Chemical mapping of a 207-nucleotide RNA with DMS and 2A3. 2A3 adducts were read by reverse transcription with SuperScript II with manganese. The reactions ran in a buffer of 150 mM KOAc, 10 mM MgCl2 and 150 mM bicine (pH 8.5), at 24 C. It was measured as part of the RMDB library OK3TST.

[RMDB]
RNA sequence: GGGAACGACUCGAGUAGAGUCGAAAAGGAUCUGAGUACUUAUAAGUGCGAAGUGAGUGAGGGUCUUACGAGCACAAAUUACAGCCCUCUAUUAAGUAUCGAAGAUCGGCCGGAGAUCGAGAUACAACUAUUAACCGGCGACUGUACGAAGAUCCGAAAUACCACUCGGUUUCGACCGAGUGGUAUUAAAAGAAACAACAACAACAAC
Reactivity to DMS in 0.01 (KOAc 150mM, MgCl2 10mM, bicine 150mM(pH8.5), 24C), signal-to-noise 2, nucleotides 027 to 156: g020g010a010u010c000u030g050a300g030u000a020c000u000u000a100u000a030a180g010u000g020c040g000a110a300g020u000g030a040g020u000g030a110g000g060g020u000c050u000u000a040c020g010a300g070c010a110c020a080a020a110u020u020a050c050a120g010c010c000c020u020c030u000a190u000u000a060a120g000u000a010u000c020g020a070a170g000a070u000c020g030g040c030c090g030g000a230g000a050u000c000g000a300g040a070u000a040c020a080a170c170u010a060u020u030a080a090c040c000g020g060c050g050a080c140u000g030u000a020c010g000a250a080g020a020u020c000c000g020a060
Reactivity to 2A3 in 0.01 (KOAc 150mM, MgCl2 10mM, bicine 150mM(pH8.5), 24C), signal-to-noise 4, nucleotides 027 to 156: g000g000a010u000c000u000g010a000g040u020a020c020u090u190a120u110a300a030g010u010g010c010g040a100a030g020u020g010a010g010u100g010a010g000g010g020u100c010u010u000a000c010g010a000g040c030a020c040a060a210a120u210u130a100c060a110g060c000c030c000u000c000u010a120u100u110a180a040g000u000a010u000c010g010a040a010g000a020u010c010g010g000c000c010g000g020a070g000a020u010c010g010a000g000a060u010a010c000a070a010c010u050a030u280u060a110a030c000c000g010g000c010g040a060c110u120g010u020a010c020g010a030a000g000a000u000c000c000g000a000